The record gives the reactivity of an RNA of 207 nucleotides to DMS and 2A3.
[RMDB]
RNA sequence: GGGAACGACUCGAGUAGAGUCGAAAAGUGAACGAUCUCGGUUGUUUCUCUGAAGGCAUGAUCACCCCGUCCGAUGCGGAAGUUCGUGCUUCGGUCGAACGCGAAAGUCGGACGGCGGCCAUGAGUCAAUAUGUUUAAGGCUUCGGCCUUAAACAAAAGUGUACUAAGAGUUCGCUCUUAGUACACUAAAAGAAACAACAACAACAAC
Reactivity to DMS in 0.01 (KOAc 150mM, MgCl2 10mM, bicine 150mM(pH8.5), 24C), signal-to-noise 1, nucleotides 027 to 156: g020u000g020a050a110c040g010a070u000c040u000c000g010g000u000u000g000u000u000u000c000u000c020u000g000a170a140g000g050c000a030u000g000a090u010c150a080c020c000c000c000g000u000c010c060g010a050u010g000c120g010g010a170a080g030u020u000c030g000u000g030c010u010u000c150g000g020u010c020g010a020a030c010g020c020g020a130a130a100g000u000c010g000g010a020c000g000g000c020g010g000c040c010a030u000g010a110g040u000c080a110a170u020a130u000g000u010u000u000a000a020g000g030c000u000u000c300g000g000c000c000u000u000a000a010a000c000a000a010a060
Reactivity to 2A3 in 0.01 (KOAc 150mM, MgCl2 10mM, bicine 150mM(pH8.5), 24C), signal-to-noise 4, nucleotides 027 to 156: g160u130g060a200a060c050g040a110u060c030u030c100g040g000u000u000g000u000u000u020c040u000c060u070g080a110a040g110g030c020a010u010g020a030u070c050a050c000c000c000c000g000u000c000c000g000a010u060g050c060g070g050a100a070g030u010u000c030g070u150g060c050u060u050c060g070g010u030c000g010a020a000c020g000c040g190a200a130a020g010u000c000g000g000a000c000g000g000c000g000g000c000c000a020u010g010a000g050u030c020a010a080u070a080u250g010u000u010u000a000a000g010g000c000u020u060c200g040g000c010c000u000u010a000a000a000c000a000a020a000
Description
The reactions ran in a buffer of 150 mM KOAc, 10 mM MgCl2 and 150 mM bicine (pH 8.5), at 24 C. For 2A3, 2,884 sequencing reads were counted.